[RMDB]
Structure probing data (2A3 and DMS) for a 177-nucleotide construct. 2A3 is a SHAPE reagent: it acylates the 2'-hydroxyl of flexible nucleotides of all four kinds. For 2A3, 2,025 sequencing reads were counted. Reactivities are given for positions 27 through 126.

RNA sequence: GGGAACGACUCGAGUAGAGUCGAAAAAACAGAUAAACCCAAAUUGGAGGACACUGUGCAGGAUACUCAGCCAGUAUUCCUCAAAACCGUCAAGGUCAUGAGAAACAAAGACUGGGAAAGUGUCAAAGUUUAAAAUCCAAUUCGUUGGAUUUUAAACAAAAGAAACAACAACAACAAC
Reactivity to 2A3 in 0.01 (KOAc 150mM, MgCl2 10mM, bicine 150mM(pH8.5), 24C), signal-to-noise 2, nucleotides 027 to 126: a000a000c140a060g070a090u240a130a180a130c020c000c050a020a110a070u150u130g140g010a050g000g010a000c000a010c010u030g100u140g080c050a070g020g110a030u050a090c030u040c060a030g100c010c000a000g030u010a100u090u020c000c020u000c010a030a020a020a010c030c030g050u120c120a160a040g010g010u000c000a000u100g020a020g050a080a020a020c020a050a120a030g050a020c010u020g010g000g020a140a060a010g020u030g020u030c000a070a050a080
Reactivity to DMS in 0.01 (KOAc 150mM, MgCl2 10mM, bicine 150mM(pH8.5), 24C), signal-to-noise 4, nucleotides 027 to 126: a070a070c110a060g010a150u010a070a110a110c010c000c010a090a090a140u000u010g020g010a160g000g000a050c090a020c010u010g020u000g010c140a080g020g000a100u010a040c020u010c050a060g030c030c030a140g010u010a090u000u000c050c000u010c000a020a050a130a050c020c020g010u000c220a180a160g000g000u000c100a250u010g000a030g010a050a040a040c050a080a110a100g010a000c020u010g000g010g000a080a080a060g010u000g010u000c020a050a060a080